This 177-nucleotide RNA was probed chemically with DMS and 2A3.
For DMS, 2,255 sequencing reads were counted.
The reactions ran in a buffer of 150 mM KOAc, 10 mM MgCl2 and 150 mM bicine (pH 8.5), at 24 C.
RNA sequence: GGGAACGACUCGAGUAGAGUCGAAAAAUCUUUUCGUCAAUCUUGGUGCCAAGAUAGAAUGUCUGUUGGGUAAAACACUAGUAUCUAAAAACCACGUUACUAACAACGCACCAUUGCUAUUAGUGCAGAUUACCUGGCUAUUCGUAGCCAGGUAAUCAAAAGAAACAACAACAACAAC
Reactivity to DMS in 0.01 (KOAc 150mM, MgCl2 10mM, bicine 150mM(pH8.5), 24C), signal-to-noise 2, nucleotides 027 to 126: a030u000c020u000u040u000u000c060g000u020c060a110a090u030c020u000u010g020g000u000g000c050c020a160a090g000a100u000a050g000a080a100u010g010u020c080u000g010u000u000g000g010g020u010a030a000a100a120c060a040c040u000a050g000u010a000u000c020u030a000a040a090a100a100c190c150a110c040g000u000u000a070c200u020a040a070c130a040a130c100g010c020a020c110c180a150u020u020g040c060u000a050u000u010a020g010u000g000c120a130
Reactivity to 2A3 in 0.01 (KOAc 150mM, MgCl2 10mM, bicine 150mM(pH8.5), 24C), signal-to-noise 1, nucleotides 027 to 126: a000u110c110u080u090u010u160c050g110u070c020a020a050u020c010u040u050g030g010u060g070c070c020a060a030g000a040u030a020g130a110a150u130g090u130c190u060g040u070u100g020g030g060u110a040a020a030a010c070a030c040u060a030g080u040a040u090c090u120a110a100a060a070a060c060c080a010c040g040u070u040a070c060u080a070a050c070a090a000c070g000c040a020c000c010a070u000u040g030c020u080a040u150u090a070g000u090g080c100a020
2A3 adducts were read by reverse transcription with SuperScript II with manganese. DMS adducts were read by reverse transcription with MarathonRT.